Chemical mapping of a 207-nucleotide RNA with DMS and 2A3. It was measured as part of the RMDB library M2RFOK. 2A3 adducts were read by reverse transcription with SuperScript II with manganese. The reactions ran in a buffer of 150 mM KOAc, 10 mM MgCl2 and 150 mM bicine (pH 8.5), at 24 C.
RNA sequence: GGGAACGACUCGAGUAGAGUCGAAAAACAGAAAAAAGGAGUUUAAAUUAGAUUUGCAAACGGACGGUACUAAAUACCGUCACUUUUACGUCUAACUUAUCGUGAACUCUGCAAAAAGAAAACAAGAAAAACAAGCGUGAGUUCGCUCACGCUUGAAGUGUAUUAUUGGGUUCGCCCAAUAAUACACAAAAGAAACAACAACAACAAC
Reactivity to DMS in 0.01 (KOAc 150mM, MgCl2 10mM, bicine 150mM(pH8.5), 24C), signal-to-noise 1, nucleotides 027 to 156: a040c030a170g010a010a070a010a070a170a280g020g000a000g020u000u000u000a030a070a030u000u000a000g010a050u000u000u040g050c020a010a020a020c180g020g040a060c000g000g040u000a010c000u000a120a010a300u010a000c000c000g010u010c000a000c010u000u010u040u010a010c070g000u000c010u000a000a040c010u000u000a060u010c170g000u010g000a010a010c040u000c010u000g000c140a000a080a060a010a150g010a060a090a180a040c090a010a060g010a090a040a160a140a170c000a020a010g000c000g080u000g000a110g040u000u000c300g010c020u000c000a000c000g000c000u000u000g030a000a090
Reactivity to 2A3 in 0.01 (KOAc 150mM, MgCl2 10mM, bicine 150mM(pH8.5), 24C), signal-to-noise 3, nucleotides 027 to 156: a010c020a020g160a010a150a000a010a020a060g040g000a010g000u040u050u100a060a100a050u050u030a010g010a040u090u090u240g050c090a050a020a020c080g020g000a000c010g000g000u010a040c060u270a070a070a130u060a010c010c000g010u000c000a050c000u030u020u000u040a030c010g000u000c000u000a020a030c010u090u100a060u280c050g040u070g060a010a010c000u010c020u040g000c060a030a130a070a030a000g060a030a080a020a020c060a050a090g130a150a100a030a000a010c010a000a000g000c000g010u010g000a010g010u040u030c070g020c050u000c000a000c010g000c000u000u010g000a010a010
Source information:
DMS adducts were read by reverse transcription with MarathonRT. The DMS profile rests on 1,835 reads. Reactivities are given for positions 27 through 156.